Source: RMDB library OK2TST, as collected in RNAgym. Chemical mapping of a 177-nucleotide RNA with 2A3 and DMS. For 2A3 the reverse transcriptase was SuperScript II with manganese. 2A3 is a SHAPE reagent: it acylates the 2'-hydroxyl of flexible nucleotides of all four kinds. The DMS profile rests on 7,598 reads. The 2A3 profile rests on 7,143 reads. DMS adducts were read by reverse transcription with MarathonRT.
[RMDB]
RNA sequence: GGGAACGACUCGAGUAGAGUCGAAAACUUAAUCUUUGCAGCUUUACUUGUCAUCCUCCUAGGUUAUCAGUAGGUUACAAAUCUUCUUUAUAUGAUAAGUAUUGAAUCCUGCAAAUGACAGUAGGAGUCGUGUAUAAAGGUUCGCCUUUAUACACGAAAAAGAAACAACAACAACAAC
Reactivity to 2A3 in 0.01 (KOAc 150mM, MgCl2 10mM, bicine 150mM(pH8.5), 24C), signal-to-noise 4, nucleotides 027 to 126: c000u040u060a030a030u040c010u010u010u040g010c010a020g010c010u030u000u010a000c000u000u010g010u020c020a030u050c010c030u050c030c010u050a110g160g000u130u070a080u120c020a030g070u050a020g020g060u040u030a060c060a040a140a090u030c030u180u020c010u070u300u090a270u060a010u170g000a010u010a020a010g000u010a030u010u040g020a050a060u070c010c010u000g000c000a000a020a050u070g020a020c080a090g030u040a020g010g090a100g100
Reactivity to DMS in 0.01 (KOAc 150mM, MgCl2 10mM, bicine 150mM(pH8.5), 24C), signal-to-noise 6, nucleotides 027 to 126: c020u010u010a060a060u000c020u000u000u000g010c030a020g010c020u000u000u000a010c010u000u000g010u000c010a030u000c140c110u000c050c050u000a070g010g020u010u010a060u010c180a110g020u000a030g010g010u000u010a110c140a060a070a090u000c040u000u000c040u010u010u010a100u000a040u030g000a020u010a010a020g000u000a020u000u000g000a100a090u020c140c010u000g010c010a010a020a030u010g000a020c120a060g000u000a030g010g000a140g010